The record gives the reactivity of an RNA of 177 nucleotides to DMS and 2A3. The reactions ran in a buffer of 150 mM KOAc, 10 mM MgCl2 and 150 mM bicine (pH 8.5), at 24 C. The DMS profile rests on 858 reads. 2A3 adducts were read by reverse transcription with SuperScript II with manganese.
RNA sequence: GGGAACGACUCGAGUAGAGUCGAAAACGAUGAGGGGAGAAGAGAAGUGGACAGGUGGGUCGAAGACGCCCGCCCCACGGCGUACGCCCGUCGCUUGUUUGCAUGCGGGGGUCAGACCCCCUUACCGGACGACGAUGGUAUUCGUACCAUCGUCGUCAAAAGAAACAACAACAACAAC
Reactivity to DMS in 0.01 (KOAc 150mM, MgCl2 10mM, bicine 150mM(pH8.5), 24C), signal-to-noise 1, nucleotides 027 to 126: c080g010a060u000g010a060g020g010g000g000a130g010a100a110g010a080g030a100a100g000u010g000g020a080c190a120g010g020u000g000g010g020u000c040g010a150a050g000a030c300g010c020c000c020g060c000c030c100c030a030c040g010g010c060g000u000a020c150g000c090c060c030g000u000c130g000c020u000u020g010u000u000u040g010c020a150u000g010c000g010g000g020g000g000u000c040a080g000a230c100c000c010c010c000u000u000a040c030c050g040
Reactivity to 2A3 in 0.01 (KOAc 150mM, MgCl2 10mM, bicine 150mM(pH8.5), 24C), signal-to-noise 1, nucleotides 027 to 126: c000g040a070u120g020a000g060g010g030g010a050g000a090a020g050a010g030a190a080g070u040g000g080a080c060a120g020g020u040g050g090g010u060c010g100a160a020g160a020c020g110c010c040c000g030c000c070c000c000a000c000g000g070c000g000u080a050c100g040c030c060c010g010u060c030g040c020u120u170g070u300u260u220g090c040a010u040g000c000g000g000g000g020g020u040c020a000g000a170c010c000c010c000c000u000u030a030c010c030g130